The data come from the RNA Mapping Database (RMDB), library RFM100. The record gives the reactivity of an RNA of 177 nucleotides to 2A3.
RNA sequence: GGGAACGACUCGAGUAGAGUCGAAAAGCUAGAUAGACACCCACGCUCAUGAGCGUACCUCAUACUGUUUUAAGUGUUAUAAUUUUUAUUGUUAAUACCCACGCUUAGAUCAGUAUCUGCGCAAGUGGGUCUUGACUGCAUUCGUGCAGUCAAGACCAAAAGAAACAACAACAACAAC
Reactivity to 2A3 in 0.01 (KOAc 150mM, MgCl2 10mM, bicine 150mM(pH8.5), 24C), signal-to-noise 2, nucleotides 027 to 126: g080c030u080a060g010a210u080a070g040a060c010a170c000c000c000a010c030g020c000u010c010a020u140g030a010g010c010g020u020a050c000c060u080c010a010u000a010c000u000g030u010u000u000u000a020a000g020u050g050u030u080a170u020a090a220u080u150u110u070u220a180u000u070g040u010u000a110a110u050a180c100c060c060a020c000g000c000u000u000a000g000a000u000c030a040g010u020a000u040c060u060g010c030g010c010a080a120g050u020g000